This 177-nucleotide RNA was probed chemically with DMS and 2A3.
For 2A3, 2,233 sequencing reads were counted.
For DMS, 1,107 sequencing reads were counted.
DMS adducts were read by reverse transcription with MarathonRT.
The data come from the RNA Mapping Database (RMDB), library TTRINS.
2A3 adducts were read by reverse transcription with SuperScript II with manganese.

[RMDB]
RNA sequence: GGGAACGACUCGAGUAGAGUCGAAAAGAUAUGGAAGGCUCGACAAGAGAGCAUCGAUCAUACAGUUCGGGGUAUAUCGGAAACGAUAUACAAGGAUGUAUGGGAGCUCUACGAGCCUUCCUAAGUCCAUUCCACCAUUCUUCGGAAUGGUGGAAUGAAAAGAAACAACAACAACAAC
Reactivity to DMS in 0.01 (KOAc 150mM, MgCl2 10mM, bicine 150mM(pH8.5), 24C), signal-to-noise 1, nucleotides 027 to 126: g010a050u000a110u000g000g010a000a010g000g010c000u010c020g000a290c300a100a270g020a060g000a010g060c010a300u010c170g000a040u030c020a000u000a000c020a030g030u020u000c010g000g000g020g020u010a000u000a020u000c010g020g010a080a020a090c000g000a020u000a010u000a000c000a190a120g000g030a090u000g000u000a000u000g000g000g000a040g000c000u020c000u030a150c000g010a000g070c000c000u000u000c010c000u000a010a100g000u000c010
Reactivity to 2A3 in 0.01 (KOAc 150mM, MgCl2 10mM, bicine 150mM(pH8.5), 24C), signal-to-noise 2, nucleotides 027 to 126: g010a020u020a020u110g010g020a000a000g000g010c000u000c030g130a160c220a300a300g220a030g040a010g300c030a100u300c030g010a030u030c000a000u000a010c020a080g300u240u070c070g010g090g300g000u020a000u010a000u000c000g030g000a010a000a000c000g000a010u000a010u000a030c000a020a030g050g010a020u020g000u000a010u000g020g030g000a000g000c000u040c040u130a170c040g030a010g000c000c000u000u000c010c000u000a020a000g000u060c000